[RMDB]
RNA sequence: GGGAACGACUCGAGUAGAGUCGAAAAGCGUCUGUCCGGGUCGGGGCGCGUAAGCCGCCCAACCUCAUCCCGUUCCCUCGCGGAACAGGGAGUGUUAGCGCACGGCUGAGGGAACUACAAAAGCCUCCGUAACGAGUAGGUUCGCCUACUCGUUACGAAAAGAAACAACAACAACAAC
Reactivity to 2A3 in 0.01 (KOAc 150mM, MgCl2 10mM, bicine 150mM(pH8.5), 24C), signal-to-noise 7, nucleotides 027 to 126: g030c020g050u050c060u070g090u050c050c010g020g010g030u030c080g020g000g000g000c020g000c020g040u120a070a050g050c050c010g020c000c010c000a020a040c020c010u030c020a140u030c010c000c000g000u010u000c010c010c010u100c150g070c200g010g010a020a040c030a170g030g030g000a020g000u090g030u030u090a030g010c030g000c040a030c040g060g000c030u040g000a020g010g030g030a070a080c040u090a030c100a040a120a000a020g030c000c000u010c020
Reactivity to DMS in 0.01 (KOAc 150mM, MgCl2 10mM, bicine 150mM(pH8.5), 24C), signal-to-noise 4, nucleotides 027 to 126: g000c030g020u000c010u010g010u030c040c050g010g000g020u010c040g010g020g000g000c030g000c030g000u030a110a100g000c160c050g010c030c000c010a140a030c040c030u000c070a180u010c000c000c010g000u000u000c000c000c000u050c300g010c150g010g000a000a000c030a080g000g000g000a010g000u010g020u010u010a110g010c160g030c050a120c080g010g010c020u010g020a070g000g010g010a080a120c110u040a110c200a050a080a070a080g000c020c030u000c070

This 177-nucleotide RNA was probed chemically with 2A3 and DMS.
It was measured as part of the RMDB libraries RFM100 and RFMREP.